Conditions: 150 mM KOAc, 10 mM MgCl2 and 150 mM bicine (pH 8.5), 24 C. An RNA of 177 nucleotides, treated with DMS and 2A3 and read out base by base. For 2A3, 797 sequencing reads were counted. For DMS the reverse transcriptase was MarathonRT. 2A3 adducts were read by reverse transcription with SuperScript II with manganese. The DMS profile rests on 1,742 reads. Reactivities are given for positions 27 through 126.
[RMDB]
RNA sequence: GGGAACGACUCGAGUAGAGUCGAAAAUUUUAUUAACUCAUACACAAUUAAUUGUCUUCUGGUUUGCUGAAGCAAUGAGACAUUUGUCACAAUAAUGUCUGUCAAAGUGGCUGGCCAUAAACGCUCAAAUACCAUGAGCAUUCGUGCUCAUGGUAUUAAAAGAAACAACAACAACAAC
Reactivity to DMS in 0.01 (KOAc 150mM, MgCl2 10mM, bicine 150mM(pH8.5), 24C), signal-to-noise 3, nucleotides 027 to 126: u000u030u010u020a050u000u000a100a150c030u010c030a070u000a100c070a080c070a090a080u000u000a060a100u020u000g000u010c030u000u000c010u010g040g020u000u000u000g030c070u030g010a080a070g020c050a050a050u010g000a070g000a000c010a020u000u000u000g010u010c300a040c240a130a050u000a010a040u000g000u000c010u010g010u000c060a040a090a100g000u000g000g040c050u010g010g030c070c060a050u000a040a060a060c140g010c050u020c060a070
Reactivity to 2A3 in 0.01 (KOAc 150mM, MgCl2 10mM, bicine 150mM(pH8.5), 24C), signal-to-noise 1, nucleotides 027 to 126: u010u010u010u070a080u030u170a080a100c000u020c040a040u210a120c070a030c020a170a140u140u020a090a030u110u130g050u030c010u010u040c020u000g130g050u050u120u210g020c050u050g060a040a030g030c000a010a150u080g050a010g000a010c000a010u010u090u090g090u030c080a000c050a230a050u060a040a010u010g000u020c000u010g120u100c050a140a000a070g020u010g050g000c020u020g000g000c060c000a010u090a030a190a000c090g000c060u060c080a040